Structure probing data (2A3 and DMS) for a 207-nucleotide construct.
[RMDB]
RNA sequence: GGGAACGACUCGAGUAGAGUCGAAAAGGGAGGCGACAGAUUUGACAAGAUAAUCUUUGAAUAGUCCAUGACUCAACAAUACCACGAUGUUGUUUUGUUAUCGGUACACGUCUGCGCUACGGUAAAUGCGAUCGUCAAACUGAUAGGCCGCCACUACUCAUCACAGAAAGUUCGCUUUCUGUGAUGAAAAAGAAACAACAACAACAAC
Reactivity to 2A3 in 0.01 (KOAc 150mM, MgCl2 10mM, bicine 150mM(pH8.5), 24C), signal-to-noise 4, nucleotides 027 to 156: g080g010g010a110g000g000c050g000a020c040a020g130a190u010u040u030g010a010c020a060a040g030a090u180a230a150u140c120u230u220u230g120a150a110u140a150g020u000c010c010a020u040g000a000c000u000c020a000a000c000a010a020u010a040c060c110a070c300g060a240u050g000u010u000g000u000u000u010u010g010u030u010a030u040c220g010g020u080a030c050a010c050g040u030c040u050g000c030g000c020u020a020c020g050g100u210a050a030a030u170g000c000g030a040u050c030g000u020c000a020a030a020c000u010g020a170u070a090g130g000c000c000g000c000c020a010c000u020a030c010
Reactivity to DMS in 0.01 (KOAc 150mM, MgCl2 10mM, bicine 150mM(pH8.5), 24C), signal-to-noise 2, nucleotides 027 to 156: g020g000g000a040g000g020c020g020a100c050a110g000a160u000u000u000g000a300c020a110a090g020a120u010a070a070u010c080u000u010u020g010a110a120u010a130g010u010c000c010a100u000g010a050c040u000c050a020a060c070a010a020u000a140c040c090a050c190g050a240u010g050u000u010g040u000u000u010u010g010u000u000a060u000c050g000g030u020a070c070a140c130g000u000c080u000g020c060g000c030u000a110c040g010g030u000a040a040a070u010g020c020g010a030u010c040g010u000c040a010a060a080c070u000g000a180u000a130g020g000c000c020g020c000c020a060c070u000a100c140
As a SHAPE reagent, 2A3 marks flexible, mostly unpaired nucleotides at the ribose 2'-OH. The RNA was probed in 150 mM KOAc, 10 mM MgCl2 and 150 mM bicine (pH 8.5) at 24 C. Source: RMDB library OK3TST, as collected in RNAgym.